[RMDB]
RNA sequence: GGGAACGACUCGAGUAGAGUCGAAAAAUGUGGACAAGAUGAACUGCUUGAAUGUUCACUGCAGCACUGUAUGCUGUAAUAGAAACUCGGGAGCAAUUACAACAUUCAAUAUGGGGAACUGGUUAAUCAGGCCACAGUACAUUUAUAUGGUGAAUUAGCACGUGAUAGGAUUCGUCCUAUCACGUGCAAAAGAAACAACAACAACAAC
Reactivity to 2A3 in 0.01 (KOAc 150mM, MgCl2 10mM, bicine 150mM(pH8.5), 24C), signal-to-noise 1, nucleotides 027 to 156: a000u030g000u000g210g000a000c000a170a100g080a170u090g050a090a000c020u090g000c020u160u070g240a120a000u030g030u000u030c000a050c170u060g000c000a000g010c050a050c150u280g110u300a300u300g000c000u000g020u000a020a000u080a080g150a040a190a000c110u150c060g030g010g000a000g000c030a000a000u180u000a090c000a060a090c000a090u040u040c120a150a000u120a170u300g000g000g000g000a000a120c020u020g010g010u090u140a250a000u140c000a000g060g000c000c060a020c020a000g030u050a120c150a050u000u300u020a180u020a060u210g250g000u140g060a130a300u120u000a060